Structure probing data (DMS) for a 177-nucleotide construct.
DMS adducts were read by reverse transcription with MarathonRT.
The data come from the RNA Mapping Database (RMDB), library TTRDES.

RNA sequence: GGGAACGACUCGAGUAGAGUCGAAAAAAGAUAUGGACGUAUGACGUUACUUGCACAGGAGGGAAGCUCGGAAACGAGCUUCCUCCCCACCCUGUGAACUACAAGGAGGAAGUACGUCCUAAGUCAAUCGUACCAAUGUCUUCGGACAUUGGUACGAAAAAGAAACAACAACAACAAC
Reactivity to DMS in 0.01 (KOAc 150mM, MgCl2 10mM, bicine 150mM(pH8.5), 24C), signal-to-noise 1, nucleotides 027 to 126: a100a180g010a040u010a290u020g000g000a000c010g000u000a010u000g000a300c050g000u000u000a300c000u000u000g000c000a000c010a000g020g000a230g010g010g000a000a010g020c000u000c000g000g000a050a040a110c000g040a000g000c000u000u000c010c000u000c000c000c000c010a300c030c000c030u020g000u010g000a010a000c120u020a300c040a070a040g000g000a180g010g010a110a300g010u000a040c000g000u010c000c000u010a040a050g010u000c010a100a100
The DMS profile rests on 618 reads. Conditions: 150 mM KOAc, 10 mM MgCl2 and 150 mM bicine (pH 8.5), 24 C. In probing experiments dimethyl sulfate is read out at A N1 and C N3, which are open when not base-paired.